[RMDB]
RNA sequence: GGGAACGACUCGAGUAGAGUCGAAAACGUAACGAUCACACCUGCUAACGCCGUUACUAAAAUACCUAACGUAGAUAAAGCUAAUGUUAUUAAUAGAUUGCGCUUUGUUACAGGUUCAUUUUUAAUACACAACCUGUACUUUCGAGUACAGGUUGUGAAAAGAAACAACAACAACAAC
Reactivity to DMS in 0.01 (KOAc 150mM, MgCl2 10mM, bicine 150mM(pH8.5), 24C), signal-to-noise 2, nucleotides 027 to 126: c180g000u020a030a020c060g000a110u010c060a240c100a080c020c060u020g000c080u030a110a020c060g000c190c010g000u010u010a040c040u000a100a060a140a090u010a110c020c000u000a060a060c120g020u000a100g010a060u010a020a010a050g020c000u010a040a030u010g000u000u010a300u000u020a050a090u010a040g000a050u000u000g000c250g030c000u000u000u000g010u000u000a020c010a030g000g000u000u040c240a050u020u000u040u000u000a000a120u000a140
Reactivity to 2A3 in 0.01 (KOAc 150mM, MgCl2 10mM, bicine 150mM(pH8.5), 24C), signal-to-noise 1, nucleotides 027 to 126: c020g030u010a030a030c040g000a040u100c020a000c000a020c060c030u010g030c080u080a090a020c070g000c010c010g000u000u010a020c020u010a000a090a100a040u160a100c000c000u010a130a020c060g070u040a030g070a120u050a040a010a050g000c010u040a080a000u100g040u140u080a090u030u260a070a130u040a110g090a090u000u120g080c090g010c000u070u030u080g020u040u010a040c010a050g010g000u000u050c030a070u000u090u040u060u130a130a100u140a070